An RNA of 177 nucleotides, treated with 2A3 and DMS and read out base by base. Reactivities are given for positions 27 through 126.
[RMDB]
RNA sequence: GGGAACGACUCGAGUAGAGUCGAAAAUGAAAUAAAGCGUACGAAGAUGGACGUACGCAACCAGUGCGUACAGGAAUCGCACAUCCAGCCCUCUAAGGUGAGCGCAAAACCUAAUAAUAGAAAAAAACGUAACUGAGAGAUUCGUCUCUCAGUUACGAAAAGAAACAACAACAACAAC
Reactivity to 2A3 in 0.01 (KOAc 150mM, MgCl2 10mM, bicine 150mM(pH8.5), 24C), signal-to-noise 2, nucleotides 027 to 126: u080g000a060a010a020u220a070a140a030g020c010g010u000a000c000g060a060a060g110a230u120g030g030a020c040g000u020a000c000g000c000a000a010c020c030a010g060u020g020c010g000u020a030c040a220g090g130a060a060u050c010g000c040a010c020a010u000c010c030a020g040c000c000c000u050c020u010a040a030g080g020u050g030a060g070c090g000c080a000a080a020a020c020c040u010a060a090u170a140a020u150a090g120a040a150a020a000a020a000a030
Reactivity to DMS in 0.01 (KOAc 150mM, MgCl2 10mM, bicine 150mM(pH8.5), 24C), signal-to-noise 2, nucleotides 027 to 126: u010g000a090a090a090u010a010a150a220g020c000g010u000a000c010g000a170a140g030a180u000g000g010a190c030g020u000a010c000g030c030a130a060c090c010a100g040u000g000c000g040u000a150c130a080g000g000a110a020u010c050g000c040a030c000a070u010c020c000a070g070c040c000c000u000c070u000a080a080g000g000u010g000a040g000c070g020c040a010a060a110a070c000c030u000a000a060u000a070a130u010a090g000a040a000a040a100a000a060a080